The record gives the reactivity of an RNA of 177 nucleotides to 2A3 and DMS. The DMS profile rests on 1,992 reads. Conditions: 150 mM KOAc, 10 mM MgCl2 and 150 mM bicine (pH 8.5), 24 C. For 2A3, 714 sequencing reads were counted.
RNA sequence: GGGAACGACUCGAGUAGAGUCGAAAAUUUGACAUCUGCAACUAUAAGGCUAAGGUUGCUGGUAUUGGAAAAUACUACAAGACUAAUACUUGUAGGUUUGUAGAAUUAGAUGACCAAGGGCAUCAUUAAUGAGAAUAGACUUCGGUCUAUUCUCAUUAAAAGAAACAACAACAACAAC
Reactivity to 2A3 in 0.01 (KOAc 150mM, MgCl2 10mM, bicine 150mM(pH8.5), 24C), signal-to-noise 1, nucleotides 027 to 126: u120u120u100g050a020c050a120u000c000u010g000c000a000a030c000u050a010u010a090a020g060g020c010u050a130a000g040g030u030u010g000c060u020g050g000u030a040u000u030g010g050a100a050a000a000u050a070c030u010a010c000a040a050g070a080c010u050a000a080u140a220c030u020u010g010u000a000g130g010u100u060u040g010u010a000g010a010a000u060u080a040g010a010u020g040a050c050c010a120a100g060g040g040c010a030u010c010a000u110u000
Reactivity to DMS in 0.01 (KOAc 150mM, MgCl2 10mM, bicine 150mM(pH8.5), 24C), signal-to-noise 3, nucleotides 027 to 126: u000u000u000g010a100c220a070u010c010u000g020c000a030a060c010u000a050u000a050a020g000g010c130u010a080a170g000g000u000u000g000c240u010g000g010u000a020u000u010g000g000a100a140a010a020u000a050c000u000a040c050a020a160g000a080c050u000a100a130u000a100c000u000u000g010u000a000g000g000u000u000u010g020u010a020g000a020a170u000u010a090g010a020u010g000a110c020c060a080a110g030g000g030c120a060u000c060a100u020u000